An RNA of 207 nucleotides, treated with 2A3 and read out base by base. 2A3 adducts were read by reverse transcription with SuperScript II with manganese. Conditions: 150 mM KOAc, 10 mM MgCl2 and 150 mM bicine (pH 8.5), 24 C.

RNA sequence: GGGAACGACUCGAGUAGAGUCGAAAAACAACAGAUAGCUGGAACCAGCGUAGAAUUCUACGCAUAUCCAUAGCGAAUGGUACCUGUAAAGAAAAUAAGUCUGGAUGUACAAGUACCAACAGCCGGACAUGCCAUGGUGAUGUCAAUCACAUAUGCACACGCAUGGCGGAUUCGUCCGCCAUGCGUGAAAAGAAACAACAACAACAAC
Reactivity to 2A3 in 0.01 (KOAc 150mM, MgCl2 10mM, bicine 150mM(pH8.5), 24C), signal-to-noise 1, nucleotides 027 to 156: a000c000a000a000c000a070g070a200u150a000g000c030u010g000g000a110a030c180c090a020g000c000g010u000a000g060a130a300u290u180c000u000a000c000g030c000a010u010a050u110c000c000a010u120a070g000c000g050a000a070u010g000g020u000a000c000c000u000g010u240a000a140a050g110a100a300a020a010u280a100a070g010u000c010u000g000g090a020u020g000u130a020c000a010a010g030u030a030c030c030a000a000c050a110g000c000c020g020g020a010c070a140u050g060c010c000a100u160g000g000u000g000a020u060g140u190c060a130a060u000c000a000c000a000u030a000u020g020c000a050